RNA sequence: GGGAACGACUCGAGUAGAGUCGAAAAGUUCGCAUGGUGCACUAUUGUGUAAUUAGUAACUAAGUAAGCUUACAAUCGAAAAUGUUUAACCAUAAAAGGGUAAAAUGGUGUAAGACAGUCUGAUACUUUACGGCUUCACGUUUCGACGUGAAGCCAACCUAAAAAUCAUCUUCGGAUGAUUUUUAGGAAAAGAAACAACAACAACAAC
Reactivity to DMS in 0.01 (KOAc 150mM, MgCl2 10mM, bicine 150mM(pH8.5), 24C), signal-to-noise 1, nucleotides 027 to 156: g050u000u000c050g030c050a200u000g040g000u000g020c060a070c050u000a080u000u000g040u000g040u000a060a070u000u010a060g030u000a060a080c010u010a050a140g030u010a100a060g030c010u010u000a010c040a050a110u010c050g010a070a140a110a110u000g020u000u000u000a080a020c000c020a060u000a050a150a130a110g000g000g020u020a050a060a070a040u000g000g020u000g010u000a030a100g000a070c040a040g000u000c020u010g000a110u010a040c060u010u000u000a080c090g040g060c000u000u000c000a000c000g020u000u000u000c240g000a060c010g030u000g000a000a000g010c000c000a000a030
Reactivity to 2A3 in 0.01 (KOAc 150mM, MgCl2 10mM, bicine 150mM(pH8.5), 24C), signal-to-noise 3, nucleotides 027 to 156: g050u060u110c070g030c120a050u130g000g020u080g030c100a050c060u130a130u180u180g010u000g030u050a050a030u020u080a030g070u050a060a030c040u020a050a050g050u040a090a070g070c020u020u040a040c060a110a110u070c060g070a140a030a000a000u040g000u050u110u160a030a010c000c000a000u110a130a170a080a070g040g030g020u070a010a050a040a090u100g000g040u010g010u040a040a020g030a030c010a010g050u030c010u080g030a040u050a280c010u040u040u060a090c100g010g000c010u000u000c010a000c000g010u000u050u120c190g080a040c010g000u000g000a030a000g000c000c000a000a000
An RNA of 207 nucleotides, treated with DMS and 2A3 and read out base by base. 2A3 adducts were read by reverse transcription with SuperScript II with manganese. Reactivities are rounded to 0.1 and cut off at 0 and 3. Conditions: 150 mM KOAc, 10 mM MgCl2 and 150 mM bicine (pH 8.5), 24 C. The DMS profile rests on 2,388 reads.